[RMDB]
RNA sequence: GGGAACGACUCGAGUAGAGUCGAAAACGGAGAGGGGCAACCCCUCUGUCAGAUUGUGCAUUUUCUUGAAAUGCUCCAGAAGGUGAGGGUACUAUUUGAUUGGGAGGAAAAGUUGUCUUCGACCUAACAAUCCGUAGAGGUUCGCCUCUACGGAUUGAAAAGAAACAACAACAACAAC
Reactivity to 2A3 in 0.01 (KOAc 150mM, MgCl2 10mM, bicine 150mM(pH8.5), 24C), signal-to-noise 2, nucleotides 027 to 126: c040g030g010a010g010a080g050g020g000g010c010a050a070c000c020c000c010u010c000u020g010u010c000a020g060a240u120u110g020u020g020c020a000u000u000u040u020c110u130u160g070a040a050a010u020g020c000u050c030c020a090g010a170a040g110g110u300g100a180g080g020g000u040a060c040u060a140u180u180u160g160a140u070u100g080g000g040a070g010g010a010a040a000a070g000u060u050g010u000c090u050u010c030g090a100c020c000u050a080a080
Reactivity to DMS in 0.01 (KOAc 150mM, MgCl2 10mM, bicine 150mM(pH8.5), 24C), signal-to-noise 3, nucleotides 027 to 126: c050g020g000a010g010a070g040g020g010g000c300a160a120c070c010c000c010u010c000u000g000u010c070a150g000a140u000u010g010u000g000c010a010u000u000u000u000c160u010u020g000a020a040a010u000g000c020u000c020c110a040g000a110a060g000g000u000g000a130g000g000g000u000a050c170u010a100u010u010u000g000a140u010u010g000g010g000a100g000g010a030a050a080a130g000u000u000g020u000c130u000u000c080g000a090c080c090u000a050a200

The record gives the reactivity of an RNA of 177 nucleotides to 2A3 and DMS. 2A3 adducts were read by reverse transcription with SuperScript II with manganese.